[RMDB]
RNA sequence: GGGAACGACUCGAGUAGAGUCGAAAAGAUAUGGAGCAUUCUGAUCGAAGAACAAGUCUCCCCACCAUCCCUCGGAAACGAGGGAUGAGGACUUGGGAGAUCGAAUGCUCCUAAGUCAAAAGCCCAGUCAAUCACGUUCGCGUGAUUGACUGGGCAAGCAUAAUCCACGGUUCGCCGUGGAUUAUGCAAAAGAAACAACAACAACAAC
Reactivity to 2A3 in 0.01 (KOAc 150mM, MgCl2 10mM, bicine 150mM(pH8.5), 24C), signal-to-noise 1, nucleotides 027 to 156: g010a000u020a000u040g000g000a000g010c010a030u060u100c270u300g110a010u000c000g170a300a000g020a020a000c010a010a000g150u080c100u080c130c040c010c020a090c040c000a000u000c000c010c000u000c000g000g000a000a000a010c010g020a000g000g000g000a000u000g010a010g000g000a000c000u000u000g000g000g000a010g000a010u000c010g020a000a010u000g020c010u000c000c000u000a000a000g000u010c000a000a000a140a070g010c000c010c000a000g020u000c000a000a010u020c000a000c040g020u050u070c210g050c010g120u020g020a010u000u010g000a000c000u000g000g000g020c000a000a000
The data come from the RNA Mapping Database (RMDB), library RNAMAK. Chemical mapping of a 207-nucleotide RNA with 2A3. Values cover nucleotides 27 to 156.